[RMDB]
RNA sequence: GGGAACGACUCGAGUAGAGUCGAAAACGCGCGCAUCGACGGUCCGCCGGUGCCCGAUCUCAAUGCGUUCUGGCGCGAGGUCAACCGGUGCGGCGCGCUGGAUACCACGACCGAAGGUCCGGUCACCAUGGAAUCUUGGUUUCGACCAAGAUUCCAUAAAAGAAACAACAACAACAAC
Reactivity to DMS in 0.01 (KOAc 150mM, MgCl2 10mM, bicine 150mM(pH8.5), 24C), signal-to-noise 1, nucleotides 027 to 126: c080g010c050g010c050g060c030a050u030c080g000a140c100g020g000u000c040c030g020c010c020g010g000u000g000c220c260c210g000a030u000c010u010c040a120a090u000g020c020g030u000u000c230u000g000g020c010g020c040g010a080g030g050u000c010a200a010c040c000g010g010u010g000c020g000g040c010g000c010g030c020u020g000g030a160u040a100c010c030a150c130g020a010c010c050g010a150a140g010g000u000c050c040g010g000u000c060a170c090c110
Reactivity to 2A3 in 0.01 (KOAc 150mM, MgCl2 10mM, bicine 150mM(pH8.5), 24C), signal-to-noise 1, nucleotides 027 to 126: c010g000c000g040c010g030c030a050u160c120g180a080c070g030g000u060c030c020g010c000c000g040g000u060g000c060c100c010g000a060u000c000u010c080a070a170u300g030c080g030u150u190c170u150g160g040c020g000c000g010a060g000g070u000c010a010a000c000c010g050g000u020g010c060g050g000c000g020c000g000c010u060g000g050a040u110a160c010c000a020c070g000a010c000c000g000a060a080g170g010u070c080c010g000g000u030c030a010c080c010

An RNA of 177 nucleotides, treated with DMS and 2A3 and read out base by base. Values cover nucleotides 27 to 126. The data come from the RNA Mapping Database (RMDB), library OK2TRN. DMS adducts were read by reverse transcription with MarathonRT. Conditions: 150 mM KOAc, 10 mM MgCl2 and 150 mM bicine (pH 8.5), 24 C.